Structure probing data (DMS and 2A3) for a 207-nucleotide construct.
The data come from the RNA Mapping Database (RMDB), library OK3TST.
For DMS, 2,329 sequencing reads were counted.
Conditions: 150 mM KOAc, 10 mM MgCl2 and 150 mM bicine (pH 8.5), 24 C.

[RMDB]
RNA sequence: GGGAACGACUCGAGUAGAGUCGAAAAGCAUCUAUGAAUAAUAUGGGAAUUGAGGUGAUCCUCGAGGAUCUUACGAAUCACGCAGAACCUAUACGAAGAUCUAUUAAUGAAUGGGUUUAUGAAAAAACAAACAUUAUUAACUUUUUACAUUAUAUGCAUCAGAUAUGGGAUUCGUCCCAUAUCUGAUAAAAGAAACAACAACAACAAC
Reactivity to DMS in 0.01 (KOAc 150mM, MgCl2 10mM, bicine 150mM(pH8.5), 24C), signal-to-noise 2, nucleotides 027 to 156: g030c030a070u010c110u010a130u000g000a160a160u010a090a100u000a060u010g000g030g000a090a140u000u010g000a110g010g010u000g040a030u000c000c040u000c060g030a180g020g020a070u000c030u010u030a150c030g020a100a090u000c070a020c080g010c060a140g000a100a230c030c020u010a060u010a160c070g000a120a110g000a050u000c030u000a030u000u010a070a080u000g010a050a130u020g000g000g010u000u000u000a040u010g010a000a030a090a090a050a050c040a020a050a100c010a080u000u010a110u000u000a060a080c020u000u000u000u000u040a100c020a040u010u000a110u010a120u000g000c000
Reactivity to 2A3 in 0.01 (KOAc 150mM, MgCl2 10mM, bicine 150mM(pH8.5), 24C), signal-to-noise 4, nucleotides 027 to 156: g020c010a020u010c050u150a070u150g060a110a060u170a180a050u100a090u200g030g030g000a040a060u060u060g020a040g000g050u060g040a040u060c020c060u030c050g000a040g020g010a050u010c010u010u040a020c030g030a030a020u060c020a010c040g030c040a030g040a060a020c000c000u040a040u000a080c030g020a010a020g020a030u030c020u040a090u180u020a080a050u080g040a010a040u040g020g000g000u020u080u110a110u080g050a070a090a080a040a050a010c040a030a110a010c010a020u090u180a030u140u130a140a060c040u110u060u050u090u140a030c010a040u050u160a110u120a070u250g060c000